The data come from the RNA Mapping Database (RMDB), library ARCHII. An RNA of 207 nucleotides, treated with DMS and 2A3 and read out base by base. Conditions: 150 mM KOAc, 10 mM MgCl2 and 150 mM bicine (pH 8.5), 24 C. 2A3 adducts were read by reverse transcription with SuperScript II with manganese. For DMS, 2,760 sequencing reads were counted. For 2A3, 1,709 sequencing reads were counted.
RNA sequence: GGGAACGACUCGAGUAGAGUCGAAAAUAUACUAAACUUAGAGGAUCGCGUUUUGUACCCUGUUCGUCGGGUCACUUAAUGUUAAAAUAAUUGACGAUAUCUAAGCAUGUAGUAUUCUCGAGUGUAGUGUUGGCGGACGCGGGUUCAACUCCCGCCACACACCAUCAAAGUUCGCUUUGAUGGUGUGAAAAGAAACAACAACAACAAC
Reactivity to DMS in 0.01 (KOAc 150mM, MgCl2 10mM, bicine 150mM(pH8.5), 24C), signal-to-noise 2, nucleotides 027 to 156: u010a070u000a030c030u020a040a110a040c020u010u000a090g010a040g050g010a040u000c040g050c060g020u000u020u000u000g040u000a090c020c000c020u000g020u010u020c190g020u000c220g020g050g000u000c120a020c090u000u000a040a020u010g040u020u000a060a070a080a080u000a050a160u010u010g030a120c000g000a020u000a080u000c050u000a020a030g030c050a300u010g010u000a040g030u000a040u000u000c020u000c030g020a110g040u020g000u000a080g010u000g030u000u000g030g000c070g020g000a100c080g030c050g060g020g010u000u060c110a080a300c090u000c010c010c000g040c010c030a080
Reactivity to 2A3 in 0.01 (KOAc 150mM, MgCl2 10mM, bicine 150mM(pH8.5), 24C), signal-to-noise 3, nucleotides 027 to 156: u140a000u000a010c000u000a010a120a020c000u020u030a020g010a030g110g080a060u010c000g040c030g050u040u020u060u060g020u040a020c000c000c030u060g110u160u140c140g100u080c050g050g010g000u020c040a010c010u020u090a050a050u090g060u110u190a040a080a090a070u300a120a130u080u160g080a040c000g010a010u010a010u010c010u000a010a000g030c060a050u160g050u100a020g000u000a030u060u030c040u010c040g050a150g030u070g010u110a130g020u040g010u100u070g030g000c030g040g000a010c030g000c000g030g000g020u000u030c010a000a020c030u000c000c000c000g000c010c000a000